RNA sequence: GGGAACGACUCGAGUAGAGUCGAAAAGAUAUGGAGCACGACGAUCAGAUUGGUGAUGACCUCGGAAACGAGCAAGCCAAUUCUGGGAGUGCUCCUAAGUCAAAAGAUGUAUCUUCGGAUACAUCAAGUAUACUUUUCGGUUCGCCGAAAAGUAUACAAAAGAAACAACAACAACAAC
Reactivity to 2A3 in 0.01 (KOAc 150mM, MgCl2 10mM, bicine 150mM(pH8.5), 24C), signal-to-noise 4, nucleotides 027 to 126: g040a020u100a070u160g000g000a010g010c010a010c040g300a090c020g000a110u030c000a010g010a030u010u000g000g060u050g050a300u220g090a160c050c000u020c020g040g000a030a070a020c010g000a000g030c010a070a000g000c000c000a030a030u300u030c000u010g010g010g000a010g000u000g000c000u000c000c000u000a010a010g030u010c040a030a000a000a160g010a000u020g000u010a010u000c010u050u120c300g090g010a000u000a000c000a000u010c000a000a010
Reactivity to DMS in 0.01 (KOAc 150mM, MgCl2 10mM, bicine 150mM(pH8.5), 24C), signal-to-noise 4, nucleotides 027 to 126: g000a070u000a300u000g000g000a040g030c000a010c000g010a120c200g010a070u000c000a000g010a040u000u000g010g000u010g010a100u010g010a080c300c020u010c000g000g000a060a080a150c010g000a020g020c040a080a250g010c010c000a000a030u000u000c000u000g010g000g010a060g000u000g010c000u000c000c000u010a000a040g010u000c040a080a060a120a110g000a020u000g000u000a000u000c000u000u000c200g010g010a010u000a000c000a000u000c000a010a090